[RMDB]
RNA sequence: GGGAACGACUCGAGUAGAGUCGAAAACGUUGUAGGGUACCUGGGGGCUCCAUGUGCGUCCUGUCGCUGCUUGGAGCUGUUACACCUAUGUAGCGGCCAUCAAAGUGGAGGCCCUCUCUUGAGCCUGAAUGAGAAAGUGCUUCCACUUUGUGUGCCAAAUAUUACUGCUAUUCGUAGCAGUAAUAUUAAAAGAAACAACAACAACAAC
Reactivity to DMS in 0.01 (KOAc 150mM, MgCl2 10mM, bicine 150mM(pH8.5), 24C), signal-to-noise 5, nucleotides 027 to 156: c050g020u010u000g030u000a040g010g010g030u000a060c060c050u000g010g010g030g030g020c030u020c010c010a060u010g020u000g020c030g010u000c120c090u010g010u010c020g030c020u010g030c020u000u000g010g010a080g030c010u000g010u000u000a090c050a150c040c040u000a080u000g030u000a050g000c050g020g030c000c020a120u010c020a010a020a050g020u010g010g010a070g010g010c000c040c000u010c010u000c010u010u000g000a170g020c160c100u000g020a110a150u010g010a030g010a030a020a030g000u000g010c010u000u010c000c010a020c010u000u000u010g020u010g010u000g010c010c010a030